[RMDB]
RNA sequence: GGGAACGACUCGAGUAGAGUCGAAAAGGAGAUAAUGAUGGUAUAGUUUAUAAUGGUGCUAUUUUUAAAGAUGAUUUAAUAACAUUAACAACCUCCUGGAACAGAAAAGGUAUAAUAGGUAACUAUAGAUUAUUGCAAAUAUCAGCAGAAGAAGAGCACUAUUAACACACUUCGGUGUGUUAAUAGUAAAAGAAACAACAACAACAAC
Reactivity to 2A3 in 0.01 (KOAc 150mM, MgCl2 10mM, bicine 150mM(pH8.5), 24C), signal-to-noise 3, nucleotides 027 to 156: g010g020a020g020a030u090a130a090u150g060a030u070g020g000u040a050u030a100g010u030u100u080a160u070a100a120u080g020g010u030g020c010u060a100u110u120u040u040u220a090a110a080g020a050u090g010a020u060u100u110a100a080u060a050a050c010a010u050u160a060a060c030a020a050c030c010u010c000c010u020g020g030a050a090c040a050g040a040a090a020a000g020g000u020a030u020a090a070u030a030g000g010u020a060a000c030u030a050u050a230g030a050u090u060a010u070u100g000c010a060a040a060u070a050u080c050a010g050c030a000g020a080a000g040a020a010g060a040g050c030
Reactivity to DMS in 0.01 (KOAc 150mM, MgCl2 10mM, bicine 150mM(pH8.5), 24C), signal-to-noise 2, nucleotides 027 to 156: g010g010a070g020a080u000a060a100u000g030a180u000g030g010u010a040u010a100g020u000u000u010a040u000a100a150u000g010g030u000g010c020u000a030u000u020u010u000u010a060a090a120g000a100u020g010a170u000u010u000a070a060u000a050a100c020a040u000u000a040a110c010a100a100c030c040u000c020c030u010g000g010a090a100c080a120g000a020a050a050a060g000g020u000a000u000a030a100u000a070g010g000u000a020a100c040u010a100u010a090g010a140u000u000a040u010u000g010c030a000a040a120u000a050u010c060a070g030c050a100g010a070a080g010a040a060g000a120g030c140

Chemical mapping of a 207-nucleotide RNA with 2A3 and DMS.
The data come from the RNA Mapping Database (RMDB), library OK3TST.